Chemical mapping of a 177-nucleotide RNA with DMS. For DMS the reverse transcriptase was MarathonRT. Conditions: 150 mM KOAc, 10 mM MgCl2 and 150 mM bicine (pH 8.5), 24 C. The DMS profile rests on 988 reads.
[RMDB]
RNA sequence: GGGAACGACUCGAGUAGAGUCGAAAAUUCCAUUGACCCACUGCUCGAGGACGUCCUCCCUGUCUCCUCGGUUCUUCUUCGAUCCGGACCGGCUCAUCUCGGCAAGAGGCGGCAGUCCUCAGUGCUCCUAACCUGAAGACUUCGGUCUUCAGGUUAGAAAAGAAACAACAACAACAAC
Reactivity to DMS in 0.01 (KOAc 150mM, MgCl2 10mM, bicine 150mM(pH8.5), 24C), signal-to-noise 1, nucleotides 027 to 126: u010u020c160c190a100u020u020g020a040c030c040c130a050c050u000g000c000u000c000g010a020g000g000a130c030g010u010c030c030u000c010c050c050u000g000u000c020u010c010c030u000c060g000g000u010u000c010u040u000c100u000u000c080g000a060u010c100c020g000g010a080c020c010g020g010c040u000c100a060u000c060u000c060g010g000c030a100a120g010a020g010g010c040g010g010c090a110g000u010c000c010u000c040a070g000u000g000c090u000c060